The record gives the reactivity of an RNA of 177 nucleotides to 2A3 and DMS.
Reactivities are given for positions 27 through 126.
RNA sequence: GGGAACGACUCGAGUAGAGUCGAAAAGCUCCCCUUCGGGGGAGCAAAAAGCGAUCUUCUAGAUGGUUGUAAAACAUCGAGUAUUACAACCACUGGAAUUUCUCUAAAACUUGCUCUUCGGAGCAAGCCUUCUAGUAGUCUUCGGACUACUAGAAGGAAAAGAAACAACAACAACAAC
Reactivity to 2A3 in 0.01 (KOAc 150mM, MgCl2 10mM, bicine 150mM(pH8.5), 24C), signal-to-noise 1, nucleotides 027 to 126: g000c000u000c020c010c000c000u000u080c110g070g020g010g030g010a000g000c010a010a000a020a010a000g030c020g030a020u010c000u000u000c000u020a100g030a300u050g000g000u010u010g000u020a010a040a000a020c030a050u280c150g020a100g070u030a040u060u010a000c000a000a000c000c010a000c000u000g000g010a000a000u010u010u020c040u030c010u030a060a110a060a140c000u000u000g010c000u010c030u030u080c240g080g000a000g000c000a010a000g000
Reactivity to DMS in 0.01 (KOAc 150mM, MgCl2 10mM, bicine 150mM(pH8.5), 24C), signal-to-noise 1, nucleotides 027 to 126: g010c000u000c000c000c000c000u000u010c150g040g000g030g000g010a010g030c000a010a040a090a100a010g020c190g000a040u000c040u000u010c000u000a020g030a090u000g030g000u000u020g000u000a000a000a100a030c030a260u010c300g000a150g020u000a080u000u000a000c010a000a000c010c000a000c000u010g000g020a000a020u000u000u000c000u000c010u010a060a040a130a300c020u000u000g000c010u010c000u030u040c190g000g010a020g010c020a000a000g000